Notes
This 207-nucleotide RNA was probed chemically with DMS and 2A3. 2A3 adducts were read by reverse transcription with SuperScript II with manganese. The DMS profile rests on 1,508 reads. Reactivities are given for positions 27 through 156. DMS adducts were read by reverse transcription with MarathonRT. The RNA was probed in 150 mM KOAc, 10 mM MgCl2 and 150 mM bicine (pH 8.5) at 24 C.
RNA sequence: GGGAACGACUCGAGUAGAGUCGAAAAUGGAUCUGCAACAACUCCAUAUAUCCGCAGAUCCUAAGGAUGUAUGGCCAACUGAUCCGAGAGGAUCUACAUUAAGGCGAAGGUCAAAUCUACGUUAAUACCGACCUGAAGCCGAAGGUAUUAACGCACAAUAUCGUCAUCCUUUCGAGGAUGACGAUAUAAAAGAAACAACAACAACAAC
Reactivity to DMS in 0.01 (KOAc 150mM, MgCl2 10mM, bicine 150mM(pH8.5), 24C), signal-to-noise 1, nucleotides 027 to 156: u020g000g080a000u000c000u000g020c030a170a130c100a080a150c060u000c030c030a030u000a060u030a040u000c000c030g020c000a110g000a010u010c080c010u000a050a040g020g010a020u030g050u000a030u030g000g060c110c040a060a240c150u000g000a020u000c000c000g030a240g000a300g030g000a040u000c010u000a050c040a090u000u000a060a050g020g000c000g000a240a010g000g000u000c070a000a090a150u010c000u000a030c020g000u000u010a010a050u000a010c040c000g040a300c020c020u010g000a130a180g000c080c030g000a040a300g000g040u000a020u000u000a010a010c010g000c000a100c110a060
Reactivity to 2A3 in 0.01 (KOAc 150mM, MgCl2 10mM, bicine 150mM(pH8.5), 24C), signal-to-noise 3, nucleotides 027 to 156: u170g010g000a000u000c000u030g020c020a050a060c030a110a150c150u090c080c040a070u110a030u030a040u120c030c060g000c000a010g000a000u030c000c000u010a100a060g020g020a010u070g040u130a050u080g080g030c060c050a070a030c100u020g000a000u000c000c010g010a030g010a020g040g020a000u010c010u040a060c040a180u120u180a100a000g030g000c060g010a040a010g010g030u020c010a010a010a120u160c130u100a030c020g000u000u000a000a000u000a000c010c010g010a010c030c030u050g070a050a000g000c030c020g010a020a020g000g000u000a000u000u010a010a000c010g060c010a050c040a020